[RMDB]
RNA sequence: GGGAACGACUCGAGUAGAGUCGAAAAACAUGCUGGCCAACCCAACCCCACGAUCCUCCAUCGGCAUGAUCAUGAUGUGUUCUCAAAUAUCAGGCCAUUAAAUCACCAUGCUCGUGCUGGUAAAGGCAACUUAUGCCCAAGUUCGCUUGGGCAUAAACUGGAAUGAAGUAUUCGUACUUCAUUCCAGAAAAGAAACAACAACAACAAC
Reactivity to DMS in 0.01 (KOAc 150mM, MgCl2 10mM, bicine 150mM(pH8.5), 24C), signal-to-noise 3, nucleotides 027 to 156: a060c050a060u010g040c040u000g020g000c060c030a100a100c050c020c030a130a100c050c000c010c020a110c130g020a140u010c050c020u010c030c040a040u000c020g010g000c010a020u000g010a040u000c060a060u000g010a050u010g000u000g030u000u010c070u000c030a130a090a140u010a130u000c050a090g030g010c030c050a080u010u000a070a110a140u010c020a020c010c000a040u000g010c100u000c030g050u000g020c020u010g040g020u000a000a070a070g000g020c070a050a090c120u010u000a030u010g000c000c000c000a020a030g010u000u010c280g010c000u000u000g010g000g040c010a000u000a010a020a160
Reactivity to 2A3 in 0.01 (KOAc 150mM, MgCl2 10mM, bicine 150mM(pH8.5), 24C), signal-to-noise 5, nucleotides 027 to 156: a000c060a030u130g020c010u060g030g030c010c030a040a030c050c000c010a010a040c020c020c000c010a060c090g050a130u070c010c020u030c020c020a040u050c020g000g000c000a010u020g000a010u020c010a020u020g040a070u090g090u000g040u130u060c090u040c070a100a140a040u230a100u110c070a080g080g020c030c010a020u060u160a050a080a050u050c000a000c010c000a000u030g000c000u020c020g020u020g010c000u020g010g000u040a110a100a020g030g020c020a040a040c040u010u000a000u000g000c000c010c000a000a000g010u030u070c100g020c100u000u010g040g010g000c000a000u000a000a010a000
The record gives the reactivity of an RNA of 207 nucleotides to DMS and 2A3. DMS adducts were read by reverse transcription with MarathonRT. 2A3 adducts were read by reverse transcription with SuperScript II with manganese. The reactions ran in a buffer of 150 mM KOAc, 10 mM MgCl2 and 150 mM bicine (pH 8.5), at 24 C.